[RMDB]
RNA sequence: GGGAACGACUCGAGUAGAGUCGAAAAAUGCUCAUUCGUGAGCAUGAGGUCGGGGUCACCAUCGAUCGAAGGGACGCAUCGAUCCUGAAGCCUCCACGGGGGAGCGUCAUUUCGGGAGGUGACGGAGGCACCCACUAGUGUUUGCUUCGGCAAACAAAACUGAGCCAAAUUUCGAUUUGGCUCAGUUAAAAGAAACAACAACAACAAC
Reactivity to DMS in 0.01 (KOAc 150mM, MgCl2 10mM, bicine 150mM(pH8.5), 24C), signal-to-noise 2, nucleotides 027 to 156: a080u000g000c010u000c000a090u000u010c300g010u010g000a060g030c000a050u010g000a030g040g020u010c080g000g000g040g020u010c020a040c000c030a230u000c140g020a080u020c040g000a080a090g040g000g010a030c000g030c050a300u000c120g000a080u010c000c000u000g050a040a160g020c040c020u000c000c030a300c090g020g000g040g000g010a060g060c030g000u000c010a100u010u000u000c020g000g020g000a180g040g020u000g020a030c040g020g000a100g060g040c080a160c020c000c020a170c070u000a130g000u000g000u000u000u000g000c010u000u010c270g050g030c020a010a010a010c010a060a070
Reactivity to 2A3 in 0.01 (KOAc 150mM, MgCl2 10mM, bicine 150mM(pH8.5), 24C), signal-to-noise 4, nucleotides 027 to 156: a000u010g000c000u010c010a050u080u100c280g140u060g000a000g000c020a000u030g010a040g050g030u170c140g010g080g030g000u010c000a010c020c000a090u290c030g050a040u030c000g010a020a020g070g030g020a000c010g010c020a150u300c050g100a110u050c000c010u050g070a090a050g030c010c010u020c050c000a050c090g010g000g000g000g010a030g000c000g000u010c020a050u040u050u040c000g000g000g010a060g000g010u000g000a010c020g020g040a050g050g000c020a070c010c000c000a040c080u140a090g150u010g010u100u010u010g000c010u030u060c250g080g000c000a000a010a010c000a030a080